Chemical mapping of a 207-nucleotide RNA with 2A3 and DMS. It was measured as part of the RMDB library OK3TST.
RNA sequence: GGGAACGACUCGAGUAGAGUCGAAAAUAAUACUUUGAAUGAAGAGGCACGCAUAUCCUUGUGAGUACAAAGCCUGUCUGGUCUACAUAGUACUGUAAAGUGAGACCCUGCCCUUAAAGAUGGAUGGAUGGAUGGAUCGAUCAAUUGAUCCAUCUGAAUAGCCUAAAUCGUUCGCGAUUUAGGCUAUAAAAGAAACAACAACAACAAC
Reactivity to 2A3 in 0.01 (KOAc 150mM, MgCl2 10mM, bicine 150mM(pH8.5), 24C), signal-to-noise 2, nucleotides 027 to 156: u110a020a000u070a050c070u140u100u210g050a140a120u090g000a110a060g000a070g090g000c010a010c020g040c040a010u010a070u220c010c040u120u060g050u070g110a010g000u010a060c020a020a050a000g020c000c010u090g060u030c070u030g010g030u000c010u000a050c060a140u090a040g060u040a060c010u060g040u120a070a120a000g020u040g070a040g070a010c000c020c020u040g070c000c000c000u050u090a080a000a010g030a010u150g050g000a030u010g100g050a050u080g020g010a070u040g000g010a020u040c050g000a000u050c020a090a040u020u040g000a000u000c000c000a000u000c030u000g000a000
Reactivity to DMS in 0.01 (KOAc 150mM, MgCl2 10mM, bicine 150mM(pH8.5), 24C), signal-to-noise 2, nucleotides 027 to 156: u000a040a040u000a050c070u000u000u010g020a110a100u000g010a090a110g020a070g020g040c050a060c050g020c050a110u000a090u000c020c020u000u030g020u010g010a050g000u000a060c050a060a110a170g000c010c000u000g000u000c070u000g010g090u000c020u030a180c020a080u000a070g040u000a030c060u010g050u000a050a060a050g030u000g020a110g020a090c000c030c050u000g000c010c000c010u000u000a050a070a080g020a110u000g000g010a040u010g000g000a110u000g040g010a080u000g000g000a030u000c040g000a140u010c160a080a180u000u000g010a020u000c000c000a040u000c000u030g020a110

For DMS the reverse transcriptase was MarathonRT. For DMS, 2,851 sequencing reads were counted. The reactions ran in a buffer of 150 mM KOAc, 10 mM MgCl2 and 150 mM bicine (pH 8.5), at 24 C. As a SHAPE reagent, 2A3 marks flexible, mostly unpaired nucleotides at the ribose 2'-OH.